[RMDB]
Background: This 177-nucleotide RNA was probed chemically with DMS. For DMS, 836 sequencing reads were counted.
RNA sequence: GGGAACGACUCGAGUAGAGUCGAAAACACGCUUUGCCAGCGCCGCCCCAGCCAGCAGGGAACCCUCGCAGCCCGUGGCCUCUGCCCCCCCACAGCCCGUCAGGAAUGGCGAGUCUGCCAGCGGCGCCCAUGCUCACAACUUCGGUUGUGAGCAUGGAAAAGAAACAACAACAACAAC
Reactivity to DMS in 0.01 (KOAc 150mM, MgCl2 10mM, bicine 150mM(pH8.5), 24C), signal-to-noise 1, nucleotides 027 to 126: c120a130c190g000c010u000u000u000g030c070c060a090g000c000g020c020c040g000c020c020c100c040a170g010c010c010a040g000c050a130g010g000g030a060a080c070c020c040u010c140g000c070a090g020c040c050c010g020u000g000g000c040c020u010c020u000g000c050c030c080c010c000c000c070a180c060a070g010c000c010c000g030u000c020a070g000g000a040a120u000g000g000c060g010a040g020u000c030u000g000c070c030a060g040c060g020g050c040g040c070